[RMDB]
RNA sequence: GGGAACGACUCGAGUAGAGUCGAAAAGGUAAAAAUCUCAAAAUUUCGAUUUUCACCAAUCCGAUUCACUCUGUAAUAAAGAAUAAACAACAUACAGCCAUUGACACACCCAAAUUUAGGCACGUCACAAUAUAUUUCACUUCGGUGAAAUAUAUUGAAAAGAAACAACAACAACAAC
Reactivity to 2A3 in 0.01 (KOAc 150mM, MgCl2 10mM, bicine 150mM(pH8.5), 24C), signal-to-noise 3, nucleotides 027 to 126: g010g010u020a020a000a000a050a050u020c060u030c110a120a240a190a210u140u260u130c070g010a000u020u000u000u050c000a000c010c010a010a050u000c010c010g010a020u000u040c000a010c060u030c020u070g030u070a100a090u060a130a210a050g100a090a050u130a170a120a060c040a030a020c010a010u140a040c060a030g000c010c010a120u050u070g030a010c000a000c000a060c070c010c000a030a090a080u120u170u060a050g000g000c020a020c020g030u030c020a000
Reactivity to DMS in 0.01 (KOAc 150mM, MgCl2 10mM, bicine 150mM(pH8.5), 24C), signal-to-noise 2, nucleotides 027 to 126: g000g020u000a010a020a030a010a010u000c010u010c110a070a090a200a170u000u010u010c090g010a040u000u000u000u000c040a010c000c010a010a280u020c080c020g000a020u000u020c010a080c020u000c000u000g010u000a070a070u010a080a080a080g010a040a050u000a030a050a110c060a030a040c020a060u020a070c120a080g000c030c030a030u010u020g000a080c080a040c100a110c030c000c040a050a100a080u010u000u010a030g000g030c040a060c100g000u000c130a170
An RNA of 177 nucleotides, treated with 2A3 and DMS and read out base by base. It was measured as part of the RMDB library RFMREP. The RNA was probed in 150 mM KOAc, 10 mM MgCl2 and 150 mM bicine (pH 8.5) at 24 C.